[RMDB]
RNA sequence: GGGAACGACUCGAGUAGAGUCGAAAACGGGAUAGGUUCGCGAUGUUGCUGUCGUCUUUCGACGCGGCUCUCGCGGCCUACUCCGGCGUCGUCGUCUCCAGAGGUACACGCUCUCUACCGCCAUCGCAAUCCGGAGUGAUUUCGAUCACUCCGGAUUAAAAGAAACAACAACAACAAC
Reactivity to 2A3 in 0.01 (KOAc 150mM, MgCl2 10mM, bicine 150mM(pH8.5), 24C), signal-to-noise 7, nucleotides 027 to 126: c010g020g000g000a020u020a010g000g040u300u300c000g000c010g020a030u160g040u300u090g040c010u070g190u300c030g010u010c010u110u300u280c270g000a000c000g000c000g000g000c000u000c000u000c000g000c000g000g000c000c000u000a000c040u000c000c000g010g030c010g020u040c030g000u010c010g020u000c020u010c020c020a030g030a040g040g060u050a040c040a010c070g020c000u020c000u010c000u050a060c020c010g020c020c000a110u070c050g000c100
Reactivity to DMS in 0.01 (KOAc 150mM, MgCl2 10mM, bicine 150mM(pH8.5), 24C), signal-to-noise 1, nucleotides 027 to 126: c040g030g010g000a010u010a000g000g000u000u020c000g000c000g000a000u030g040u020u020g000c000u040g000u060c000g000u010c010u000u110u030c200g000a000c010g050c050g000g020c000u020c040u000c000g000c010g000g020c000c000u000a000c000u000c000c020g000g000c040g000u000c100g000u010c010g000u000c010u000c070c030a060g000a250g000g000u010a040c030a110c120g000c050u010c040u030c060u010a110c000c000g000c000c030a060u010c050g030c080

Overview: Structure probing data (2A3 and DMS) for a 177-nucleotide construct. For DMS, 2,811 sequencing reads were counted. The RNA was probed in 150 mM KOAc, 10 mM MgCl2 and 150 mM bicine (pH 8.5) at 24 C. DMS adducts were read by reverse transcription with MarathonRT.